An RNA of 207 nucleotides, treated with 2A3 and DMS and read out base by base. The data come from the RNA Mapping Database (RMDB), library OK3TST. For 2A3 the reverse transcriptase was SuperScript II with manganese. The DMS profile rests on 3,389 reads. The RNA was probed in 150 mM KOAc, 10 mM MgCl2 and 150 mM bicine (pH 8.5) at 24 C.

RNA sequence: GGGAACGACUCGAGUAGAGUCGAAAAACUCCAUGAAUAGCACAUAGUCGGUACUUAGGAACUAUUGAAUGAAUGUGAGGCAAAUUCUUAGAAUGUUAACCGCCUAGUAUGUAUUAAUAGAACAAUUCCUAACUGUUUGUUCACCAGGAGGUUGAUACCAGUAGUACCUAUUCGUAGGUACUACUGGAAAAGAAACAACAACAACAAC
Reactivity to 2A3 in 0.01 (KOAc 150mM, MgCl2 10mM, bicine 150mM(pH8.5), 24C), signal-to-noise 4, nucleotides 027 to 156: a000c010u010c010c010a040u080g060a050a050u080a060g080c050a030c050a060u090a050g040u060c060g040g040u100a070c030u070u080a080g050g010a020a030c030u050a070u070u100g050a100a050u050g050a070a010u090g030u020g050a020g030g000c030a070a060a040u050u020c030u030u130a130g060a200a070u090g020u030u090a100a070c040c040g010c010c030u040a040g050u060a020u070g040u010a070u130u070a120a070u090a070g010a030a010c010a080a070u140u050c010c000u070a090a080c030u050g050u110u070u040g040u040u010c040a020c040c030a050g040g000a010g020g010u030u020g030a050u060a080
Reactivity to DMS in 0.01 (KOAc 150mM, MgCl2 10mM, bicine 150mM(pH8.5), 24C), signal-to-noise 2, nucleotides 027 to 156: a060c010u010c010c000a110u000g000a120a090u000a070g030c040a050c040a120u000a110g010u000c060g050g010u000a120c040u000u010a040g030g030a070a200c020u010a020u000u000g000a080a050u010g020a070a040u010g010u010g010a070g010g000c010a170a090a130u000u010c030u000u000a090g020a100a080u020g010u010u010a030a020c030c060g020c020c010u010a060g010u010a050u000g000u010a040u000u010a050a090u000a140g010a040a020c000a040a080u010u000c060c030u010a070a100c090u000g010u010u000u000g010u000u000c030a050c010c020a140g010g010a050g000g030u000u000g020a070u010a150
DMS adducts were read by reverse transcription with MarathonRT.